[RMDB]
RNA sequence: GGGAACGACUCGAGUAGAGUCGAAAAUGAGUAUUAUAGGACUUUCUUCUAAAUGAGCUAAAUAAGUCACCAUUGACUUCUUGGUGCUGUUGAAAAUAAUCCAUUUUCACUAAAAGUGUGUGAAACCUACAGCAUAUUCUUCACGCAGAGAUUUUCACGUACCUCAGUGAUUCGUCACUGAGGUACGAAAAGAAACAACAACAACAAC
Reactivity to DMS in 0.01 (KOAc 150mM, MgCl2 10mM, bicine 150mM(pH8.5), 24C), signal-to-noise 1, nucleotides 027 to 156: u010g030a120g020u000a070u000u020a140u000a010g000g000a090c000u000u000u000c020u000u000c100u020a130a110a090u020g010a080g030c040u000a090a070a020u000a030a020g020u010c020a060c060c240a130u010u010g010a040c010u000u000c010u000u000g010g020u010g000c000u000g000u020u040g010a120a060a050a130u000a040a120u000c120c050a110u000u010u010u000c040a180c080u000a000a040a050a050g040u000g010u010g060u000g000a000a030a120c100c040u000a070c070a090g020c020a300u000a080u000u010c030u000u010c000a100c050g030c050a160g000a090g000a190u000u000u000u000c080a100
Reactivity to 2A3 in 0.01 (KOAc 150mM, MgCl2 10mM, bicine 150mM(pH8.5), 24C), signal-to-noise 3, nucleotides 027 to 156: u080g000a020g040u060a050u220u100a090u150a100g060g020a030c020u000u070u040c020u140u040c050u090a060a140a150u110g010a040g000c000u060a140a050a090u090a110a010g010u070c010a020c050c090a110u050u130g050a040c010u030u020c020u090u110g030g000u010g030c010u030g010u050u050g030a100a080a020a040u100a010a050u000c000c020a010u000u000u000u110c050a040c000u050a040a080a070a100g030u050g010u040g000u010g050a020a020a030c060c050u050a100c030a030g050c010a010u020a110u130u120c040u040u070c050a040c070g040c050a020g020a050g000a110u040u050u040u070c060a010

The record gives the reactivity of an RNA of 207 nucleotides to DMS and 2A3.
The RNA was probed in 150 mM KOAc, 10 mM MgCl2 and 150 mM bicine (pH 8.5) at 24 C.
The DMS profile rests on 1,672 reads.
DMS adducts were read by reverse transcription with MarathonRT.
The data come from the RNA Mapping Database (RMDB), library OK3TST.